[RMDB]
RNA sequence: GGGAACGACUCGAGUAGAGUCGAAAAGCGGGGACUCCCUAAAGCUCGAUUCUACCAACCAGCCGGGGAAACUUGUCUGGGGCCGAUGUUAACAGCAUUGGGUAUGGUAACAACGAAGAGAGAUAUGCUGGCUUGCCAGCGAAAUGGGUAAUCCGCACCAUUACCUAUGGUUCGCCAUAGGUAAUGGAAAAGAAACAACAACAACAAC
Reactivity to DMS in 0.01 (KOAc 150mM, MgCl2 10mM, bicine 150mM(pH8.5), 24C), signal-to-noise 2, nucleotides 027 to 156: g010c000g000g010g030g020a210c050u000c000c000c000u000a030a070a190g000c020u000c010g000a300u060u000c010u000a020c000c010a150a280c000c010a030g000c050c010g000g020g000g020a130a090a140c020u010u000g000u000c020u000g020g000g000g020c040c010g030a020u010g000u000u000a130a110c140a240g010c040a060u000u010g000g020g020u000a140u010g010g000u000a110a050c020a040a060c150g020a050a070g010a300g000a030g000a160u000a080u000g000c010u000g000g010c030u000u000g040c000c000a050g000c010g000a000a070a080u020g020g010g000u000a130a130u010c000c010g050c030a120
Reactivity to 2A3 in 0.01 (KOAc 150mM, MgCl2 10mM, bicine 150mM(pH8.5), 24C), signal-to-noise 5, nucleotides 027 to 156: g000c010g000g010g010g040a030c080u100c000c010c000u070a110a090a040g000c000u000c000g010a010u000u000c000u010a000c000c020a010a020c000c000a000g020c020c010g000g010g010g000a030a050a050c010u020u030g010u000c000u000g030g030g000g000c000c000g000a000u000g090u290u060a080a050c050a070g010c000a010u010u010g020g000g010u170a300u230g010g000u010a030a020c010a010a000c170g000a020a000g000a000g000a000g000a000u010a030u140g000c000u000g000g000c050u120u180g040c010c000a000g000c010g010a030a050a060u070g000g000g000u020a030a040u030c000c000g000c000a000
The record gives the reactivity of an RNA of 207 nucleotides to DMS and 2A3.